[RMDB]
RNA sequence: GGGAACGACUCGAGUAGAGUCGAAAACUCUUAUCGAGAGCGGCAGAGGGACUGGCCCGAUGAAGCCCGGCAACCUAACUUUAUUUAAGCGUAAAGUGAAGGUGCUAAUUCCCGCAAAAUGGUGUAUAAACGACCGUUAACUUCGGUUAACGGUCAACAAAUAAGUUUCGUUCGCGAAACUUAUUUGAAAAGAAACAACAACAACAAC
Reactivity to 2A3 in 0.01 (KOAc 150mM, MgCl2 10mM, bicine 150mM(pH8.5), 24C), signal-to-noise 1, nucleotides 027 to 156: c020u020c000u030u090a180u080c020g000a000g010a010g000c130g020g000c030a000g020a060g070g000g020a060c100u120g170g050c000c000c000g030a060u070g070a030a000g000c000c000c000g000g000c010a100a100c010c010u000a010a000c000u020u020u030a080u060u160u150a120a040g130c030g060u000a030a000a000g010u030g070a090a050g010g000u000g000c010u010a010a010u020u000c000c040c000g000c040a040a130a010a030u130g080g000u100g050u130a060u150a110a300a050c150g010a000c000c000g000u000u000a000a000c000u030u050c160g060g000u000u000a000a000c000g010g000u010c010a000a000
Reactivity to DMS in 0.01 (KOAc 150mM, MgCl2 10mM, bicine 150mM(pH8.5), 24C), signal-to-noise 2, nucleotides 027 to 156: c010u010c010u000u010a280u010c040g000a030g030a080g030c020g020g080c030a130g000a210g000g000g030a140c100u010g000g030c000c030c030g020a160u010g000a250a240g030c000c020c030g020g000c000a010a050c000c010u010a140a020c000u000u000u020a020u000u000u000a120a210g040c300g020u000a010a000a050g000u000g000a080a040g000g010u000g000c010u000a070a150u000u000c000c000c010g020c090a050a060a110a150u000g020g000u000g020u000a150u000a100a180a210c060g010a030c010c010g010u000u000a010a000c000u010u010c300g040g010u010u000a000a010c000g000g000u000c020a010a080

Description
Structure probing data (2A3 and DMS) for a 207-nucleotide construct. The RNA was probed in 150 mM KOAc, 10 mM MgCl2 and 150 mM bicine (pH 8.5) at 24 C. For 2A3 the reverse transcriptase was SuperScript II with manganese.